[RMDB]
Source: RMDB library OK2TRN, as collected in RNAgym. Structure probing data (DMS and 2A3) for a 177-nucleotide construct. DMS (dimethyl sulfate) methylates the pairing face of unpaired adenines and cytosines. For DMS, 1,182 sequencing reads were counted. 2A3 adducts were read by reverse transcription with SuperScript II with manganese. DMS adducts were read by reverse transcription with MarathonRT. The 2A3 profile rests on 1,848 reads.
RNA sequence: GGGAACGACUCGAGUAGAGUCGAAAAGAGAGACACUGACUCUCUCAGAGUGUGAGACACUGUCACUGAGACAGUGACUGUCACUCUCUCUCAGACUGAGACUCUCAGACUCUCACAGAGACAGUGACUGGUGCAAGUUUUUCGAAACUUGCACCAGAAAAGAAACAACAACAACAAC
Reactivity to DMS in 0.01 (KOAc 150mM, MgCl2 10mM, bicine 150mM(pH8.5), 24C), signal-to-noise 2, nucleotides 027 to 126: g030a080g020a050g010a100c030a140c000u000g000a140c080u000c020u030c030u010c150a020g020a020g020u010g010u000g000a020g060a160c060a040c030u010g010u000c020a250c270u000g020a210g000a030c050a010g020u000g010a090c070u010g020u000c010a050c040u000c060u000c040u000c050u000c080a110g000a050c050u010g000a070g020a080c150u000c020u010c020a090g000a090c040u000c020u000c060a090c220a090g000a050g000a110c040a040g000u000g000a240
Reactivity to 2A3 in 0.01 (KOAc 150mM, MgCl2 10mM, bicine 150mM(pH8.5), 24C), signal-to-noise 1, nucleotides 027 to 126: g060a000g000a000g020a010c030a000c110u070g090a060c010u020c000u000c010u020c010a000g000a020g030u110g020u010g050a000g000a010c050a000c040u030g020u050c020a030c180u240g050a060g010a220c010a020g010u000g000a050c010u030g040u000c010a010c000u000c000u000c020u000c010u000c030a050g010a130c070u050g030a010g020a080c020u050c010u000c060a000g040a190c040u000c000u000c010a070c000a050g060a030g010a030c000a000g000u000g040a070